[RMDB]
RNA sequence: GGGAACGACUCGAGUAGAGUCGAAAAAACAAUGAGCUGGGCGCGGGCAUGGCCGUGGCGUUGAAGGACCUAGAGAUCCGCGGUGCCGGCAACGUGCUCGGCAUCGAGCAGUCCGGACACGUCGCCGCAACACCCAACUAUUCGUAGUUGGGUGUUGAAAAGAAACAACAACAACAAC
Reactivity to 2A3 in 0.01 (KOAc 150mM, MgCl2 10mM, bicine 150mM(pH8.5), 24C), signal-to-noise 2, nucleotides 027 to 126: a000a000c130a080a100u160g020a040g050c040u040g030g020g000c070g030c060g050g040g000c090a080u080g030g000c030c010g010u040g010g020c010g010u010u010g020a040a030g030g000a000c000c020u090a120g030a000g010a250u090c090c060g050c020g010g020u030g010c030c000g010g030c030a050a140c120g130u100g020c070u080c060g000g000c020a010u030c020g000a020g020c020a020g010u000c010c000g000g020a000c020a000c020g010u030c010g010c020c020g030
Reactivity to DMS in 0.01 (KOAc 150mM, MgCl2 10mM, bicine 150mM(pH8.5), 24C), signal-to-noise 4, nucleotides 027 to 126: a080a050c130a080a090u000g000a080g010c030u000g020g000g000c060g040c060g010g000g010c070a070u000g000g020c050c070g020u000g010g000c040g030u000u000g010a300a130g000g000a070c030c040u020a110g010a170g000a090u000c090c060g020c030g010g020u000g000c060c020g010g010c020a070a050c140g000u000g010c030u000c010g010g010c080a010u000c030g010a060g000c110a140g020u000c010c010g000g010a220c180a020c020g010u000c020g020c030c060g010
This 177-nucleotide RNA was probed chemically with 2A3 and DMS.
The DMS profile rests on 4,325 reads.
For 2A3 the reverse transcriptase was SuperScript II with manganese.
For DMS the reverse transcriptase was MarathonRT.
The reactions ran in a buffer of 150 mM KOAc, 10 mM MgCl2 and 150 mM bicine (pH 8.5), at 24 C.